Chemical mapping of a 207-nucleotide RNA with 2A3 and DMS. The RNA was probed in 150 mM KOAc, 10 mM MgCl2 and 150 mM bicine (pH 8.5) at 24 C. DMS adducts were read by reverse transcription with MarathonRT. It was measured as part of the RMDB library OK3TST. Reactivities are given for positions 27 through 156. For 2A3 the reverse transcriptase was SuperScript II with manganese.
[RMDB]
RNA sequence: GGGAACGACUCGAGUAGAGUCGAAAAGUUGAACAAGCACGUGGUUAGUUUAAGACAUAGUCCUAACGACCUAGUACAUCAUAGUACUUUCGUCGCAGUAGCUAACAGUCAUCCUGAAUGGCUGGGAGAGGCAUUCUUGAGGAGAGCAUUAGCCUUGUAACGGGUCUGAAUUCGUUCAGACCCGUUAAAAAGAAACAACAACAACAAC
Reactivity to 2A3 in 0.01 (KOAc 150mM, MgCl2 10mM, bicine 150mM(pH8.5), 24C), signal-to-noise 3, nucleotides 027 to 156: g030u020u040g050a090a020c040a080a020g050c020a010c110g060u070g050g020u080u040a110g020u080u030u130a090a020g020a010c020a100u160a030g020u000c010c010u030a040a000c010g000a000c000c000u010a000g000u010a010c020a040u240c030a040u110a140g000u000a010c000u050u080u030c030g000u000c020g000c020a030g040u100a020g010c020u020a040a060c010a040g060u050c000a030u040c000c080u070g080a140a030u040g050g010c020u010g010g040g020a060g010a010g010g010c010a010u030u040c030u030u100g010a050g000g010a030g000a000g000c010a010u030u050a020g020c000c000u050u040g030
Reactivity to DMS in 0.01 (KOAc 150mM, MgCl2 10mM, bicine 150mM(pH8.5), 24C), signal-to-noise 2, nucleotides 027 to 156: g020u010u000g000a140a090c080a070a100g000c060a080c050g020u010g030g040u000u020a090g020u000u010u000a070a090g030a060c030a230u000a100g000u000c030c010u000a110a030c020g010a010c000c020u000a020g020u000a010c020a050u030c300a200u040a230g000u000a030c000u000u000u000c030g020u010c020g000c030a050g040u000a050g000c030u000a030a080c010a100g000u000c010a090u000c110c100u000g020a120a080u000g010g000c000u030g050g010g000a060g000a090g030g000c010a050u010u000c050u000u000g010a150g000g000a130g010a080g000c020a050u000u000a100g000c050c030u000u000g010